Chemical mapping of a 177-nucleotide RNA with DMS and 2A3. It was measured as part of the RMDB libraries RFM100 and RFMREP. The RNA was probed in 150 mM KOAc, 10 mM MgCl2 and 150 mM bicine (pH 8.5) at 24 C. Values cover nucleotides 27 to 126. For 2A3, 4,276 sequencing reads were counted.
[RMDB]
RNA sequence: GGGAACGACUCGAGUAGAGUCGAAAAGGGGGGGUUGACCCUGCGGGGGUCCCCAGGCCGUCAACUUCCGGUGCCAGACGUUGGUACGUCAGGGUCGAGCACAAUGCGCUGCCGCCCGCUGCCGAUAAACAUUUUUAUUCUUCGGAAUAAAAAUGUUAAAAGAAACAACAACAACAAC
Reactivity to DMS in 0.01 (KOAc 150mM, MgCl2 10mM, bicine 150mM(pH8.5), 24C), signal-to-noise 7, nucleotides 027 to 126: g010g010g010g010g000g010g000u000u000g000a030c010c010c000u000g000c300g030g000g010g030g010u050c010c010c020c010a020g010g010c110c210g010u000c020a030a020c010u000u000c010c000g000g010u010g020c020c030a120g000a090c130g000u000u000g010g000u010a040c090g000u000c040a110g020g010g010u010c060g000a180g010c020a040c060a100a090u030g010c190g020c130u000g010c010c020g000c040c020c010g010c040u010g000c010c020g010a110u020a090
Reactivity to 2A3 in 0.01 (KOAc 150mM, MgCl2 10mM, bicine 150mM(pH8.5), 24C), signal-to-noise 5, nucleotides 027 to 126: g110g010g010g000g000g000g000u000u020g010a020c010c000c000u010g000c090g020g020g000g050g150u250c000c000c000c000a010g020g020c090c070g000u010c000a020a010c000u070u020c000c010g010g010u050g050c050c010a050g020a110c120g090u110u070g020g010u060a060c080g030u020c120a080g020g010g020u120c050g030a050g030c010a010c010a040a210u240g020c070g030c070u020g010c020c000g000c000c000c010g030c000u020g010c000c000g010a010u100a050